[RMDB]
RNA sequence: GGGAACGACUCGAGUAGAGUCGAAAAGAUGUUCUUUGGAGUGGGUACAUCGGGUGGCACAACAAUUACUAUGACGCAUCAUGGUGGUUGUGAACUCGUGGCUUGAUGCGUCAAGUUAUGAGUGUUCUAUGUUACUGUACCCACUGUGAUAUAGAAACUAAAUCGACUGGUUCGCCAGUCGAUUUAGAAAAGAAACAACAACAACAAC
Reactivity to DMS in 0.01 (KOAc 150mM, MgCl2 10mM, bicine 150mM(pH8.5), 24C), signal-to-noise 2, nucleotides 027 to 156: g010a070u000g010u000u000c030u000u010u010g020g000a040g050u000g000g010g000u000a020c010a090u000c090g040g000g050u010g000g080c080a030c040a060a080c040a070a040u000u000a020c040u020a080u010g030a060c140g020c110a090u010c000a040u000g010g040u000g020g010u010u000g020u000g010a090a050c040u000c060g040u010g050g000c040u000u000g010a070u000g010c220g030u010c000a010a040g000u010u000a040u020g000a210g060u000g020u010u000c060u000a050u000g040u000u000a060c010u000g060u000a050c010c000c020a100c010u000g050u000g010a140u000a070u000a110g000a110a140a270
Reactivity to 2A3 in 0.01 (KOAc 150mM, MgCl2 10mM, bicine 150mM(pH8.5), 24C), signal-to-noise 3, nucleotides 027 to 156: g100a070u120g030u060u010c030u060u100u120g090g020a010g010u010g000g000g000u000a000c010a010u060c080g030g080g060u170g040g060c010a000c020a140a020c000a040a200u050u040a000c010u030a110u240g010a000c010g010c020a020u000c000a010u030g100g060u090g030g040u110u090g120u100g100a050a040c030u010c140g110u080g110g010c060u010u000g000a000u000g000c000g000u000c000a000a000g000u000u000a010u000g030a040g050u020g030u150u140c050u050a050u080g050u060u110a070c080u060g000u010a000c000c000c000a000c000u000g000u010g010a020u010a000u010a140g070a010a050a010

This 207-nucleotide RNA was probed chemically with DMS and 2A3. Values cover nucleotides 27 to 156. The RNA was probed in 150 mM KOAc, 10 mM MgCl2 and 150 mM bicine (pH 8.5) at 24 C.